[RMDB]
RNA sequence: GGGAACGACUCGAGUAGAGUCGAAAAGAGCUGAAGUACAGCAAGAACGACGUAAUCCUUGGCAAAGCGUCGAAGAUAAGCGUGCCGACUGCCAAGGAUUAACGGCACGCGAGGCGAAGACGCCAGACAUGGGAUUAUGCUUCGGCAUAAUCCCAUGAAAAGAAACAACAACAACAAC
Reactivity to DMS in 0.01 (KOAc 150mM, MgCl2 10mM, bicine 150mM(pH8.5), 24C), signal-to-noise 3, nucleotides 027 to 126: g010a070g020c000u000g000a190a110g000u010a190c110a030g000c010a110a120g020a150a110c150g010a070c080g070u020a100a020u000c000c000u000u030g010g000c000a060a100a090g030c070g040u010c040g030a100a120g040a170u010a140a090g000c020g010u000g000c010c030g010a080c070u000g000c010c010a010a020g010g010a050u000u010a010a060c130g000g000c010a000c010g000c000g000a070g000g030c040g000a180a160g000a140c010g010c010c110a170g000a180
Reactivity to 2A3 in 0.01 (KOAc 150mM, MgCl2 10mM, bicine 150mM(pH8.5), 24C), signal-to-noise 4, nucleotides 027 to 126: g150a020g000c010u030g040a160a060g140u280a190c040a000g000c020a000a040g090a070a040c060g050a000c030g030u060a050a010u010c000c010u030u000g020g020c050a150a180a080g080c040g030u100c060g020a070a010g020a100u170a090a060g000c000g000u000g000c010c000g130a210c110u080g010c000c000a000a000g000g000a000u010u030a020a000c000g000g000c000a000c020g010c000g000a100g000g000c030g070a240a060g100a120c020g010c000c010a030g010a030

An RNA of 177 nucleotides, treated with DMS and 2A3 and read out base by base. The 2A3 profile rests on 3,322 reads. The RNA was probed in 150 mM KOAc, 10 mM MgCl2 and 150 mM bicine (pH 8.5) at 24 C.